[RMDB]
RNA sequence: GGGAACGACUCGAGUAGAGUCGAAAAUGGUUCUUAGCAUGCAUAAGGAGAUUUUAAGCUUAGAACAUAUUAGCACUUGGUUUAAAGAUGUUUUGUGUAUGGUUUAUACAUGUAGAAACUGAGAACGCACUUACAAGCCUUUCGAGGCUUGUAAGUGAAAAGAAACAACAACAACAAC
Reactivity to DMS in 0.01 (KOAc 150mM, MgCl2 10mM, bicine 150mM(pH8.5), 24C), signal-to-noise 3, nucleotides 027 to 126: u010g030g020u000u000c000u000u000a050g050c030a060u000g010c040a020u000a040a050g000g010a110g010a160u020u020u000u000a040a070g020c010u010u000a050g010a100a110c050a090u010a100u010u000a100g020c140a070c040u000u010g000g010u000u000u000a040a040a050g020a080u000g010u000u000u000u010g030u010g020u020a040u000g010g000u000u010u010a040u000a050c100a040u000g000u010a110g010a060a050a180c030u000g000a020g000a030a030c060g000
Reactivity to 2A3 in 0.01 (KOAc 150mM, MgCl2 10mM, bicine 150mM(pH8.5), 24C), signal-to-noise 2, nucleotides 027 to 126: u110g050g000u030u000c000u000u030a030g050c000a020u050g000c010a010u030a130a030g100g020a110g020a200u030u000u060u020a070a000g000c000u000u020a000g120a170a010c010a010u170a090u100u210a080g030c040a010c040u010u020g050g010u060u070u090a050a110a000g080a040u060g060u120u010u050u030g010u010g000u020a030u030g020g020u050u040u040a080u050a040c080a030u150g070u080a040g100a060a050a000c020u030g000a000g000a010a030c000g000

Chemical mapping of a 177-nucleotide RNA with DMS and 2A3. For 2A3 the reverse transcriptase was SuperScript II with manganese. The DMS profile rests on 3,185 reads. Source: RMDB library OK2TRN, as collected in RNAgym. The reactions ran in a buffer of 150 mM KOAc, 10 mM MgCl2 and 150 mM bicine (pH 8.5), at 24 C. For 2A3, 1,383 sequencing reads were counted.